The record gives the reactivity of an RNA of 177 nucleotides to DMS and 2A3. The 2A3 profile rests on 1,920 reads. Reactivities are rounded to 0.1 and cut off at 0 and 3. It was measured as part of the RMDB library OK1LIB. For 2A3 the reverse transcriptase was SuperScript II with manganese.

[RMDB]
RNA sequence: GGGAACGACUCGAGUAGAGUCGAAAAGAAAAGGAUCGCCUGAGGAUCCAUCAGGAAAAGAAAAGUAGUGCAGUAGACUACAUACUGAAAAGAAAAGCAUUGCUAAGGAAUGCACUUAGAAAAGAAAGGGUAUGAAUGAGUUCGCUCAUUCAUACCCAAAAGAAACAACAACAACAAC
Reactivity to DMS in 0.01 (KOAc 150mM, MgCl2 10mM, bicine 150mM(pH8.5), 24C), signal-to-noise 1, nucleotides 027 to 126: g000a230a000a190a020g000g040a000u020c040g000c020c050u010g000a000g000g000a000u010c000c040a040u000c000a080g000g000a000a130a160a200g000a000a040a090a140g040u000a000g000u000g020c020a130g030u000a070g000a030c000u000a030c010a090u010a040c050u000g000a110a080a150a090g000a060a020a030a070g000c010a050u000u010g010c150u010a110a040g000g000a040a000u000g000c020a130c060u000u000a020g000a100a090a150a180g000a100a040a190
Reactivity to 2A3 in 0.01 (KOAc 150mM, MgCl2 10mM, bicine 150mM(pH8.5), 24C), signal-to-noise 2, nucleotides 027 to 126: g090a010a050a000a040g100g050a030u030c080g010c160c270u110g060a000g030g000a030u000c040c040a000u040c030a000g000g100a060a090a000a000g100a020a080a050a000g030u060a000g020u010g000c120a040g050u280a040g000a060c060u040a020c050a000u020a000c010u080g060a100a050a110a020g060a000a060a020a020g000c040a080u000u150g100c010u040a000a020g040g010a010a010u030g000c000a010c070u030u000a010g130a050a170a030a000g120a020a020a000